[RMDB]
Source: RMDB library TTRDEL, as collected in RNAgym. The record gives the reactivity of an RNA of 177 nucleotides to DMS and 2A3. 2A3 adducts were read by reverse transcription with SuperScript II with manganese. The DMS profile rests on 2,185 reads. For 2A3, 2,319 sequencing reads were counted.
RNA sequence: GGGAACGACUCGAGUAGAGUCGAAAAGAUAUGGAAUUCCACCGAGGACUUUGAUCUCGGAAACGAGGGAGUCCGGCGUGGAGAUUCCUAAGUCAAAUCUCGUAUCACCUUCGGGUGAUACGAGAAACAAAUAAGACACGUUCGCGUGUCUUAUUUGAAAAGAAACAACAACAACAAC
Reactivity to DMS in 0.01 (KOAc 150mM, MgCl2 10mM, bicine 150mM(pH8.5), 24C), signal-to-noise 2, nucleotides 027 to 126: g000a060u000a300u010g010g000a020a050u000u010c000c010a010c020c020g030a300g000g010a020c000u000u000u000g010a070u010c000u000c020g000g000a070a090a160c010g010a060g020g000g010a020g000u000c000c010g020g030c270g020u000g000g000a020g000a010u000u000c000c000u010a050a130g000u000c020a070a120a120u010c000u000c000g010u010a010u000c000a010c000c010u010u000c260g020g010g010u010g000a000u000a000c000g000a000g000a010a040a150
Reactivity to 2A3 in 0.01 (KOAc 150mM, MgCl2 10mM, bicine 150mM(pH8.5), 24C), signal-to-noise 1, nucleotides 027 to 126: g030a010u110a060u210g020g010a000a000u060u000c010c000a000c000c030g120a270g000g010a010c070u300u300u260g110a150u220c010u010c050g000g000a070a050a040c010g010a000g000g080g010a030g000u020c010c060g020g070c220g000u010g000g000a050g020a020u020u020c000c000u010a100a020g050u020c000a010a030a250u000c010u010c010g000u000a020u000c000a000c010c020u020u100c300g190g000g000u010g000a000u010a020c000g000a000g000a000a000a000